[RMDB]
Description: The record gives the reactivity of an RNA of 177 nucleotides to DMS and 2A3. It was measured as part of the RMDB library M2PK50. For DMS the reverse transcriptase was MarathonRT.
RNA sequence: GGGAACGACUCGAGUAGAGUCGAAAACACAGAAUCUUCGGAUUCUGUGAAAGGAACAAAAACAUGCUAAAGUUCCAAAAAGCAUGAAGGACAAAAGUCCAAAAACACAUCGCUUCGGCGAUGUGAAGAAAUAGUUCAUGUUCGCAUGAACUAUUUCAAAAGAAACAACAACAACAAC
Reactivity to DMS in 0.01 (KOAc 150mM, MgCl2 10mM, bicine 150mM(pH8.5), 24C), signal-to-noise 5, nucleotides 027 to 126: c010a010c000a020g010a030a010u000c000u000u010c180g040g010a000u000u000c000u010g000u000g000a020a060a120g020g010a070a090c160a030a050a070a110a180c000a000u000g010c010u000a060a110a120g000u010u010c010c000a050a050a110a130a040g000c000a000u010g010a150a100g020g000a010c000a090a090a080a130g000u010c000c010a020a050a070a090a160c010a000c000a010u000c000g000c000u000u020c160g020g000c010g020a010u010g010u000g010a040a060
Reactivity to 2A3 in 0.01 (KOAc 150mM, MgCl2 10mM, bicine 150mM(pH8.5), 24C), signal-to-noise 6, nucleotides 027 to 126: c000a010c000a000g010a000a000u000c010u040u080c140g140g010a010u000u000c000u000g000u000g000a000a000a000g050g020a060a030c050a080a190a040a010a010c000a000u010g000c000u060a130a060a120g060u060u030c020c010a070a060a020a020a010g000c000a010u030g040a110a130g010g000a010c030a060a300a070a060g000u000c000c000a040a010a020a020a010c010a000c000a000u010c000g010c020u030u080c220g130g000c000g000a000u000g000u000g000a000a010